An RNA of 177 nucleotides, treated with DMS and 2A3 and read out base by base.
The data come from the RNA Mapping Database (RMDB), library OK1LIB.
For 2A3, 1,755 sequencing reads were counted.
The RNA was probed in 150 mM KOAc, 10 mM MgCl2 and 150 mM bicine (pH 8.5) at 24 C.
Reactivities are given for positions 27 through 126.
RNA sequence: GGGAACGACUCGAGUAGAGUCGAAAAAGACCGAGGUGAAUUUCACCACCGGAGUGGCCGCCUUUCAGGCCUUUCAGGGUUAGCUUAAAGCACGCAAAUCCUGCGGGUACAGCUUCACGGGUCAACGACCCUCACUGCCAUUCGUGGCAGUGAGGGUAAAAGAAACAACAACAACAAC
Reactivity to DMS in 0.01 (KOAc 150mM, MgCl2 10mM, bicine 150mM(pH8.5), 24C), signal-to-noise 2, nucleotides 027 to 126: a100g000a140c020c030g000a150g040g010u020g000a060a160u040u080u020c000a140c000c020a140c080c000g000g000a050g000u000g020g000c050c020g000c080c080u000u010u010c190a080g010g000c020c020u000u000u060c020a030g000g000g000u010u020a100g000c020u010u000a060a110a140g040c170a080c160g040c030a020a070a090u000c090c050u000g010c300g000g000g000u010a070c060a080g000c000u010u020c040a090c080g000g030g010u040c010a050a120c300g000
Reactivity to 2A3 in 0.01 (KOAc 150mM, MgCl2 10mM, bicine 150mM(pH8.5), 24C), signal-to-noise 3, nucleotides 027 to 126: a000g040a010c040c010g000a100g000g050u050g010a130a290u070u120u190c050a030c010c030a020c000c000g040g010a070g020u070g010g010c000c010g020c040c000u140u130u130c170a090g010g060c010c020u020u090u050c010a020g000g020g050u070u090a020g000c030u030u100a140a030a080g130c090a060c080g030c020a010a030a090u050c020c000u010g010c010g020g030g010u080a060c060a020g010c030u010u040c040a020c040g030g000g030u020c040a050a020c060g040